The data come from the RNA Mapping Database (RMDB), library TTRDEL. Chemical mapping of a 177-nucleotide RNA with 2A3 and DMS. For 2A3 the reverse transcriptase was SuperScript II with manganese. High DMS reactivity at an A or C suggests that its Watson-Crick edge is free. Reactivities are rounded to 0.1 and cut off at 0 and 3. For DMS the reverse transcriptase was MarathonRT. The reactions ran in a buffer of 150 mM KOAc, 10 mM MgCl2 and 150 mM bicine (pH 8.5), at 24 C.

RNA sequence: GGGAACGACUCGAGUAGAGUCGAAAAGAUAUGGAAUACGGGAGCCAAUUAGGCUAUCUCGGAAACGAGCCGAGGCCUGUUGGCGAAGAACGUAUUCCUAAGUCAAAGGAAGUCUUCGGACUUCCAACGUGUAUCAAUUCUUCGGAAUUGAUACACGAAAAGAAACAACAACAACAAC
Reactivity to 2A3 in 0.01 (KOAc 150mM, MgCl2 10mM, bicine 150mM(pH8.5), 24C), signal-to-noise 2, nucleotides 027 to 126: g010a010u090a030u150g000g000a010a000u000a000c010g040g030g010a030g000c000c000a080a020u250u300a150g020g000c030u060a140u130c000u000c030g010g020a070a190a060c190g020a040g080c030c050g140a100g040g000c000c000u020g020u010u020g000g000c010g000a030a010g010a000a000c010g000u010a000u000u020c000c000u010a110a010g040u030c060a140a050a030g000g020a000a000g000u000c010u050u130c300g110g010a010c000u000u000c000c000a000a000
Reactivity to DMS in 0.01 (KOAc 150mM, MgCl2 10mM, bicine 150mM(pH8.5), 24C), signal-to-noise 4, nucleotides 027 to 126: g010a060u000a300u010g000g000a000a010u000a000c000g010g020g000a150g010c010c010a000a040u000u000a010g010g010c000u010a060u000c010u000c000g000g000a060a070a120c120g010a050g030c300c090g000a090g010g010c000c000u000g000u000u010g010g000c000g000a050a080g000a080a190c000g000u000a010u000u000c000c000u010a010a100g000u000c040a080a130a150g000g000a030a020g000u000c000u000u010c170g000g010a010c000u000u000c010c000a060a050